Structure probing data (2A3 and DMS) for a 177-nucleotide construct. For 2A3, 1,667 sequencing reads were counted. It was measured as part of the RMDB libraries RFM100 and RFMREP. The RNA was probed in 150 mM KOAc, 10 mM MgCl2 and 150 mM bicine (pH 8.5) at 24 C.
RNA sequence: GGGAACGACUCGAGUAGAGUCGAAAAAGACCAGGCACGUACGCGUGCCUGGUCAAAUGAAUAACCAACGAAAAAAGGCGAGAAGUACGCCUUUCAAUGAGUACCAGUGGAUACGUCCACUGGUACAAUUCUCCGUCAUGUUCGCAUGACGGAGAAUAAAAGAAACAACAACAACAAC
Reactivity to 2A3 in 0.01 (KOAc 150mM, MgCl2 10mM, bicine 150mM(pH8.5), 24C), signal-to-noise 2, nucleotides 027 to 126: a000g000a000c000c000a000g000g000c020a000c010g000u030a020c290g000c000g180u030g000c040c010u000g030g000u000c000a000a000a010u040g000a000a040u110a090a010c000c010a030a070c090g150a080a110a170a070a000a000g020g000c080g030a080g050a230a240g130u180a110c000g040c000c030u010u000u020c000a020a050u060g020a020g010u000a000c010c000a020g000u000g000g000a000u110a130c270g180u020c000c000a010c000u000g000g000u000a000c000a000
Reactivity to DMS in 0.01 (KOAc 150mM, MgCl2 10mM, bicine 150mM(pH8.5), 24C), signal-to-noise 2, nucleotides 027 to 126: a070g000a000c010c010a000g000g010c000a040c000g060u030a070c250g050c030g090u000g000c060c030u000g000g030u000c010a000a020a070u000g000a230a040u010a090a110c010c020a100a160c140g030a030a080a050a090a010a000g030g010c000g010a160g010a140a160g010u040a020c000g030c000c000u000u030u000c090a110a080u040g030a160g020u000a000c000c000a030g040u000g010g000a050u010a080c170g000u000c010c000a010c000u000g030g000u000a000c000a020